[RMDB]
RNA sequence: GGGAACGACUCGAGUAGAGUCGAAAAAUUGUGGAAUUGACCGCGCUAAGGAUCAAUUGCGUGUUCAACAAGUAAAGUUUCAACCACCUAUAGCUGUCUGUAAAGACGAAAGGUUCUGUAAAGUGCCUAACUCGACAAUUGAUGGUCAUAACUAUGACAUUCGCACGCUAUUCGUAGCGUGCGAAUGAAAAGAAACAACAACAACAAC
Reactivity to 2A3 in 0.01 (KOAc 150mM, MgCl2 10mM, bicine 150mM(pH8.5), 24C), signal-to-noise 2, nucleotides 027 to 156: a010u100u050g030u020g050g080a010a090u120u020g030a030c010c010g000c000g000c060u140a090a030g180g020a120u060c050a060a120u130u050g000c010g000u020g010u010u020c010a040a020c030a050a020g050u120a190a070a070g150u050u140u090c110a130a050c030c020a060c020c010u130a120u090a120g120c050u040g020u010c000u010g250u150a090a190a050g000a070c020g060a060a040a000g050g000u000u110c030u010g140u090a190a080a040g000u000g120c000c000u070a020a000c030u000c080g070a040c000a060a270u050u050g010a080u090g040g020u030c010a070u050a090a020c060u070a110u150g060a020